[RMDB]
RNA sequence: GGGAACGACUCGAGUAGAGUCGAAAAACGUCGGACAGCUUACCCAAUCGCAUAGUGCUCAAGCCAACAGUGGUUUCAGGGCAGAGCGCAGGUCGGCGGCCUUGGGGACCCCGGAGGUCCGGUAGCGGACGUCCCUUAAGUUCGCUUAAGGGACGUCAAAAGAAACAACAACAACAAC
Reactivity to DMS in 0.01 (KOAc 150mM, MgCl2 10mM, bicine 150mM(pH8.5), 24C), signal-to-noise 3, nucleotides 027 to 126: a040c100g000u010c030g010g020a030c020a120g020c060u000u000a110c000c010c030a050a040u000c080g020c020a080u010a080g020u000g000c010u000c030a080a090g000c020c020a080a080c200a160g010u000g030g020u010u000u010c130a150g020g000g000c020a100g020a050g010c020g030c120a070g000g020u000c130g040g000c010g000g000c090c080u000u000g000g000g000g010a090c050c030c060c080g000g010a090g020g010u000c020c010g000g010u010a100g030c150g010
Reactivity to 2A3 in 0.01 (KOAc 150mM, MgCl2 10mM, bicine 150mM(pH8.5), 24C), signal-to-noise 2, nucleotides 027 to 126: a000c040g040u050c000g000g000a050c010a050g010c050u040u120a080c000c000c000a000a020u080c050g010c090a110u070a220g110u030g000c010u030c050a100a020g040c020c000a050a070c070a280g130u100g120g060u100u210u160c100a090g010g000g010c040a030g020a010g000c030g000c030a030g080g040u090c060g060g020c020g010g030c010c030u050u050g040g000g020g060a080c010c010c000c030g140g040a070g070g000u010c040c020g040g020u030a040g060c110g050